[RMDB]
Chemical mapping of a 177-nucleotide RNA with DMS and 2A3. High 2A3 reactivity points to a flexible backbone, as in loops and unpaired stretches. DMS adducts were read by reverse transcription with MarathonRT. The reactions ran in a buffer of 150 mM KOAc, 10 mM MgCl2 and 150 mM bicine (pH 8.5), at 24 C.
RNA sequence: GGGAACGACUCGAGUAGAGUCGAAAAGUGCGCCGCUAUUCAUCUAUCAUUCGUCUCGUGAGUACGAGACUUAUCAAAGUACGGGAUCUCUCAUAGAUGUUAAAUCUUUCAUACUGCACGUUAGAAAGGGAAAACAUUUGUUCGCAAAUGUUUUCCCAAAAGAAACAACAACAACAAC
Reactivity to DMS in 0.01 (KOAc 150mM, MgCl2 10mM, bicine 150mM(pH8.5), 24C), signal-to-noise 2, nucleotides 027 to 126: g050u000g000c010g030c050c000g050c070u000a040u000u000c010a050u060c070u030a020u060c300a120u000u040c110g040u000c030u010c000g020u000g000a210g010u050a000c000g000a020g010a000c040u010u040a050u010c080a000a140a130g030u060a040c040g000g000g000a070u000c020u010c090u010c100a060u000a010g040a030u030g000u000u040a000a040a050u020c080u000u080u020c010a070u000a080c010u000g010c030a080c000g000u000u050a060g000a090a040a090
Reactivity to 2A3 in 0.01 (KOAc 150mM, MgCl2 10mM, bicine 150mM(pH8.5), 24C), signal-to-noise 4, nucleotides 027 to 126: g030u040g010c030g010c030c010g010c060u050a070u060u070c010a040u020c020u070a070u070c060a130u090u140c030g000u010c000u000c010g030u050g160a090g120u210a010c010g000a010g000a020c000u010u030a040u010c120a110a020a040g020u020a070c010g020g000g020a040u010c020u000c000u000c040a060u050a060g050a050u020g030u100u090a040a110a060u040c030u010u070u010c010a020u020a110c010u030g050c030a000c050g010u020u040a060g020a130a070a040